The record gives the reactivity of an RNA of 207 nucleotides to 2A3. It was measured as part of the RMDB library OK3TST.
RNA sequence: GGGAACGACUCGAGUAGAGUCGAAAAACAACAGAUAGCUGGAACCAGCGUAGAAUUCUACGCAUAUCCAUAGCGAAUGGUACCUGUAAAGAAAAUAACUUUGGAUGUACAAGUACCAACAGCCGGAGAUGCCAUGGUGAUGUCAAUCACAUAUGCAACCUAUCAGGCGUUUCGACGCCUGAUAGGUAAAAGAAACAACAACAACAAC
Reactivity to 2A3 in 0.01 (KOAc 150mM, MgCl2 10mM, bicine 150mM(pH8.5), 24C), signal-to-noise 1, nucleotides 027 to 156: a000c010a030a010c010a120g050a080u120a050g000c000u080g000g020a020a140c090c060a070g000c050g000u080a000g070a200a300u300u050c010u000a020c000g010c050a020u070a020u020c170c000a170u240a000g030c020g020a010a000u000g010g000u000a020c010c010u050g000u010a030a030a190g020a010a050a030a110u050a020a020c100u080u080u110g100g000a000u010g050u020a000c000a010a010g010u000a000c000c000a030a030c030a020g010c000c000g200g040a060g000a060u090g000c030c000a020u080g000g050u050g000a090u010g050u120c130a100a010u080c010a000c000a070u140a010u020g000c080a080

Reactivities are given for positions 27 through 156. For 2A3 the reverse transcriptase was SuperScript II with manganese. For 2A3, 347 sequencing reads were counted. The reactions ran in a buffer of 150 mM KOAc, 10 mM MgCl2 and 150 mM bicine (pH 8.5), at 24 C.